Description
Chemical mapping of a 207-nucleotide RNA with DMS and 2A3.

[RMDB]
RNA sequence: GGGAACGACUCGAGUAGAGUCGAAAAGAGUAGAAGCAGGGUUUGACCAAGCUAUUGUUCUACCUUGGGCCAUUGCUAUGUUUUUGUAGAGUAAGAGUGUUUCCUUAUGCUGUCACCUCAAAAGUUAAAAACGUGGUGCCUCCAGCAAGGAAGUCAAGGAGUACUAAAAUUUCGAUUUUAGUACUCCAAAAGAAACAACAACAACAAC
Reactivity to DMS in 0.01 (KOAc 150mM, MgCl2 10mM, bicine 150mM(pH8.5), 24C), signal-to-noise 3, nucleotides 027 to 156: g010a160g020u000a050g010a110a060g010c020a030g000g010g020u010u010u010g020a280c030c050a020a100g020c040u010a080u000u000g010u010u010c080u000a050c120c030u010u000g000g000g020c040c060a170u020u020g010c010u000a050u000g020u000u000u000u000u000g010u000a080g010a180g000u010a060a100g000a130g020u000g020u000u000u000c010c010u000u010a160u000g030c020u000g000u000c020a040c010c010u010c060a050a070a100a130g030u000u010a060a100a070a140a090c110g010u000g000g010u010g000c090c030u000c140c010a030g000c030a040a070g020g000a030a050g010u000c060a070a240
Reactivity to 2A3 in 0.01 (KOAc 150mM, MgCl2 10mM, bicine 150mM(pH8.5), 24C), signal-to-noise 5, nucleotides 027 to 156: g050a010g020u120a020g020a090a010g020c030a030g050g020g030u100u150u180g080a080c030c030a020a010g020c010u100a110u240u180g030u080u050c030u040a070c020c000u010u020g010g000g020c040c020a080u060u070g000c020u060a040u120g030u020u040u020u040u040g060u040a070g010a070g140u090a140a030g050a020g080u080g040u020u000u020c000c000u040u030a100u130g000c000u030g140u240c000a000c010c000u020c020a040a060a120a100g040u110u190a140a080a060a040a010c100g010u040g000g000u010g020c010c030u050c070c000a000g000c000a010a010g000g000a010a010g000u010c010a060a050
2A3 adducts were read by reverse transcription with SuperScript II with manganese. The reactions ran in a buffer of 150 mM KOAc, 10 mM MgCl2 and 150 mM bicine (pH 8.5), at 24 C.